[RMDB]
RNA sequence: GGGAACGACUCGAGUAGAGUCGAAAACUGCCACGUGAGUGGCAGAGUGUAGACGUGAGUCUACACAGCAUGAUCGUGAGAUCAUGCACUAUGAGCGUUCGCGCUCAUAGACAGUACGGUGACGUACUGAAGUAGUUCUUCGGAACUACAGUAUAACUUCGGUUAUACAACCUGGGAUAGACUAGGGGAUCUUCUGCUCUGCACAACCAGCCACACGGCACAGUGCGCCGACAUAGGUGGCUGGUGGUGCUAGAACACAGGAUCUUAGCCGGUUGUUCGCAACCGGCAAAAGAAACAACAACAACAAC
Reactivity to DMS in 0.01 (KOAc 150mM, MgCl2 10mM, bicine 150mM(pH8.5), 24C), signal-to-noise 3, nucleotides 027 to 266: c000u000g010c000c010a010c010g000u020g000a220g010u000g000g010c000a000g000a040g020u000g000u000a000g000a010c000g000u030g000a130g020u000c000u000a010c000a000c000a120g040c000a010u000g000a010u000c000g000u030g000a130g010a000u000c000a010u000g000c020a240c040u010a000u000g010a010g010c000g030u010u030c210g020c030g020c000u010c000a000u110a000g010a300c030a000g020u000a000c000g000g000u010g000a180c000g030u020a000c010u000g010a150a120g000u000a000g000u000u000c000u000u040c170g010g010a010a010c000u000a000c010a120g000u000a010u010a010a010c010u000u020c190g040g010u000u010a010u010a000c010a200a110c030c020u000g000g000g000a150u020a120g010a170c010u010a020g000g010g010g000a010u000c000u000u000c280u000g010c050u000c010u000g000c010a020c010a040a010c010c010a000g000c010c010a010c000a200c020g000g000c010a050c110a200g020u010g030c170g020c020c010g000a140c240a130u020a110g010g020u000g000g020c000u000g000g000u000g000g030u000g000c000u020a000g010a020a010c010a030c200a010g000g000a020u000c010u010u010a150
Reactivity to 2A3 in 0.01 (KOAc 150mM, MgCl2 10mM, bicine 150mM(pH8.5), 24C), signal-to-noise 4, nucleotides 027 to 266: c000u000g010c000c000a010c010g130u140g160a180g010u000g010g000c000a000g000a020g000u000g000u000a020g010a010c030g060u090g040a040g020u010c000u000a000c000a000c000a000g000c000a010u000g000a000u010c010g050u090g080a090g010a010u000c000a000u000g000c000a000c000u010a000u000g000a000g000c010g010u080u120c230g050c010g010c110u000c000a000u000a000g050a020c010a000g000u000a000c000g010g080u090g120a040c010g000u000a000c000u010g020a130a030g000u010a000g000u000u000c020u030u040c220g100g010a000a000c000u000a000c010a020g000u010a000u000a020a000c010u050u060c190g100g000u000u010a010u010a030c030a020a070c000c000u020g030g030g040a180u220a290g130a140c040u050a030g010g000g040g010a010u000c000u060u000c010u060g000c000u010c000u010g000c000a000c000a020a010c000c000a000g000c000c000a010c000a020c000g010g060c020a020c050a160g300u190g220c110g010c040c010g040a080c070a110u180a080g220g040u010g000g000c000u000g000g000u000g010g000u000g000c000u010a000g000a010a010c020a000c000a010g000g010a000u000c010u060u090a010
About this RNA:
The record gives the reactivity of an RNA of 307 nucleotides to DMS and 2A3. For DMS, 6,121 sequencing reads were counted. 2A3 adducts were read by reverse transcription with SuperScript II with manganese. For 2A3, 7,768 sequencing reads were counted. DMS adducts were read by reverse transcription with MarathonRT. Conditions: 150 mM KOAc, 10 mM MgCl2 and 150 mM bicine (pH 8.5), 24 C.